[RMDB]
RNA sequence: GGGAACGACUCGAGUAGAGUCGAAAAGGUAGGGCAUUCGUGCCCUACCACACCUCUAAGCAGAUUGGCGAGGACGACGUCGCGGCCCACGUUUACCAUCAACUACUCUCUCCUUCGGGAGAGAGAAGCCAUAUAUCGAUUUCGAUCGAUAUAUGGCAAAAGAAACAACAACAACAAC
Reactivity to 2A3 in 0.01 (KOAc 150mM, MgCl2 10mM, bicine 150mM(pH8.5), 24C), signal-to-noise 6, nucleotides 027 to 126: g000g000u000a000g000g000g000c010a010u020u070c190g110u050g000c000c000c010u010a000c010c000a000c000a000c000c010u020c040u060a080a050g050c040a030g040a300u150u180g060g010c020g010a040g050g010a050c040g010a020c030g040u030c030g010c020g080g050c010c010c010a030c020g020u020u040u080a150c020c020a050u140c030a050a060c030u150a070c000u020c000u000c000u010c000c000u020u070c210g080g000g000a000g000a000g010a000g000a000a000
Reactivity to DMS in 0.01 (KOAc 150mM, MgCl2 10mM, bicine 150mM(pH8.5), 24C), signal-to-noise 4, nucleotides 027 to 126: g010g020u000a010g000g020g020c000a030u000u010c170g010u000g000c000c000c000u000a000c000c000a020c140a090c050c020u010c130u010a110a160g020c060a100g000a080u010u010g010g000c060g010a110g010g000a070c050g010a070c080g020u000c050g010c060g020g000c020c000c030a200c060g000u000u010u010a160c050c030a110u000c090a050a060c160u010a160c000u000c000u000c000u000c000c000u010u020c180g010g010g000a030g000a010g000a000g000a040a070

About this RNA:
The record gives the reactivity of an RNA of 177 nucleotides to 2A3 and DMS. It was measured as part of the RMDB library M2PK50. The reactions ran in a buffer of 150 mM KOAc, 10 mM MgCl2 and 150 mM bicine (pH 8.5), at 24 C. Reactivities are given for positions 27 through 126.